[RMDB]
RNA sequence: GGGAACGACUCGAGUAGAGUCGAAAAGGUGGUGCCCCGGUGUCCAAGCUUGUGGUUCAGGCCCGCCAGCACGACGUGGUUACUUUCGCCCACGCUGCCGUCGGGAUUGAUGCGGUAGCGCGGCACCGGAGAUAUGCCAAUUCGUUGGCAUAUCUCCAAAAGAAACAACAACAACAAC
Reactivity to 2A3 in 0.01 (KOAc 150mM, MgCl2 10mM, bicine 150mM(pH8.5), 24C), signal-to-noise 3, nucleotides 027 to 126: g080g020u110g070g000u090g040c040c000c010c010g030g010u050g050u040c040c020a040a040g030c050u140u100g090u170g140g050u130u040c050a030g040g070c030c000c000g010c000c010a010g000c010a010c090g180a040c020g050u010g000g060u140u160a090c050u150u220u130c110g030c000c000c000a020c010g000c000u000g010c010c000g030u060c050g020g000g060a070u030u130g020a030u110g000c040g100g120u060a010g000c010g000c030g010g010c000a010c000c010
Reactivity to DMS in 0.01 (KOAc 150mM, MgCl2 10mM, bicine 150mM(pH8.5), 24C), signal-to-noise 3, nucleotides 027 to 126: g010g020u010g030g020u010g000c030c000c010c060g020g010u000g020u010c030c040a080a300g000c020u020u000g030u000g000g020u000u010c050a060g000g000c050c020c030g000c070c010a050g020c020a060c110g000a190c030g020u000g000g000u000u000a110c110u010u000u030c090g000c220c000c020a030c020g000c010u000g010c000c000g030u000c020g020g000g000a110u010u000g000a060u000g010c040g010g010u000a020g010c010g020c300g000g000c020a020c030c020